[RMDB]
RNA sequence: GGGAACGACUCGAGUAGAGUCGAAAACUUGGGACGCUUACGACGAACCACAUCUUCUCAUUGGUUUUCUACUACGAAGGGUACAUUGACUUCGACAUGGGCAUCAAAUUGAGGUGCAAGGAAAGAAUCUAACAAGGAACUUCGGUUCCUUGUUAGAAAAAGAAACAACAACAACAAC
Reactivity to 2A3 in 0.01 (KOAc 150mM, MgCl2 10mM, bicine 150mM(pH8.5), 24C), signal-to-noise 2, nucleotides 027 to 126: c030u060u110g000g000g020a010c030g020c060u100u060a070c180g100a030c020g010a090a020c000c010a010c050a110u000c020u140u030c030u000c030a100u030u050g000g040u090u030u030u000c020u030a090c010u020a020c020g010a030a020g090g010g010u050a060c050a200u070u250g070a060c030u020u020c030g050a040c030a050u090g020g050g000c020a020u010c030a030a110a270u170u120g040a010g010g050u030g000c000a030a030g040g040a080a090a070g040a020a080
Reactivity to DMS in 0.01 (KOAc 150mM, MgCl2 10mM, bicine 150mM(pH8.5), 24C), signal-to-noise 4, nucleotides 027 to 126: c090u000u000g020g010g010a190c050g010c040u000u010a150c160g010a150c050g000a050a180c030c030a070c220a080u000c060u000u000c040u010c060a090u020u010g010g010u000u000u010u000c030u000a080c100u000a110c040g010a060a080g010g000g010u000a050c160a100u010u000g010a080c020u000u000c020g020a120c120a060u010g000g000g000c100a020u000c040a020a060a170u000u000g020a070g000g000u000g000c060a050a090g000g000a070a090a070g010a110a140